[RMDB]
RNA sequence: GGGAACGACUCGAGUAGAGUCGAAAAUAAAACAAUGAUUUUGUAAAGGUUGAAAUUCGGCUCAUAUUCGUCCGAUGUAAUCAACGUAUUAUUUAGUUCAGGGAAAAUCGUCGUAUAUGGCUCCAAAGAUCCACCUAAAUUUCGAUUUAGGUGGAUCAAAAGAAACAACAACAACAAC
Reactivity to 2A3 in 0.01 (KOAc 150mM, MgCl2 10mM, bicine 150mM(pH8.5), 24C), signal-to-noise 2, nucleotides 027 to 126: u050a000a000a000a000c000a040a050u090g040a070u010u110u070u110g080u070a070a090a050g130g000u000u000g000a060a090a110u050u020c020g000g030c060u020c110a110u100a100u260u100c030g060u090c020c010g020a030u040g020u090a160a110u000c040a060a080c010g030u080a040u140u020a030u020u180u060a100g010u080u040c030a010g000g020g100a040a040a010a080u040c030g030u000c000g000u050a040u010a020u180g040g000c040u010c060c060a070a030a000
Reactivity to DMS in 0.01 (KOAc 150mM, MgCl2 10mM, bicine 150mM(pH8.5), 24C), signal-to-noise 3, nucleotides 027 to 126: u020a060a150a050a060c030a050a080u010g000a110u000u010u010u010g010u010a070a090a130g000g010u010u000g000a040a100a120u000u000c000g000g000c040u000c070a150u000a110u000u010c090g020u010c030c000g000a040u010g000u010a050a070u000c020a040a040c080g020u000a060u000u000a050u000u000u000a100g010u000u010c100a100g010g000g000a040a040a050a060u010c070g000u000c040g000u030a060u000a070u020g000g010c100u010c020c050a030a070a150